[RMDB]
RNA sequence: GGGAACGACUCGAGUAGAGUCGAAAAAGCGUGUUCGAGUUCUCCGGGUACGGGGACUUCAGCGAAAAUCACGUCGCAUACCUGCGCGACACGCUCGGUGCGCCGGGUCCGGGCCCGGAUGAAAGCGAAACUGGUAUAAGUUCGCUUAUACCAGUUUAAAAGAAACAACAACAACAAC
Reactivity to 2A3 in 0.01 (KOAc 150mM, MgCl2 10mM, bicine 150mM(pH8.5), 24C), signal-to-noise 5, nucleotides 027 to 126: a010g100c080g020u100g040u050u030c030g020a050g050u040u010c010u000c010c000g000g000g040u060a070c040g000g030g050g140a100c070u130u120c170a010g010c030g060a050a020a020a120u210c070a030c180g050u010c010g000c010a020u080a210c000c020u060g020c060g000c010g140a090c010a010c050g060c030u090c110g120g010u020g010c010g000c000c030g010g010g000u020c010c000g030g040g000c020c000c000g000g000a040u190g020a030a030a000g030c020g000
Reactivity to DMS in 0.01 (KOAc 150mM, MgCl2 10mM, bicine 150mM(pH8.5), 24C), signal-to-noise 9, nucleotides 027 to 126: a080g010c100g020u010g010u000u000c030g000a080g010u000u000c000u000c000c000g010g000g020u000a050c020g010g010g010g010a060c100u000u000c130a100g010c040g000a050a040a100a110u020c190a120c150g000u000c000g010c010a110u010a090c060c050u000g000c130g010c030g000a100c070a060c030g020c090u000c130g010g010u000g010c040g010c020c020g000g000g000u000c020c010g000g000g010c000c000c000g010g000a010u010g010a020a040a070g010c040g000

Structure probing data (2A3 and DMS) for a 177-nucleotide construct.
For 2A3, 9,210 sequencing reads were counted.
Values cover nucleotides 27 to 126.
In probing experiments dimethyl sulfate is read out at A N1 and C N3, which are open when not base-paired.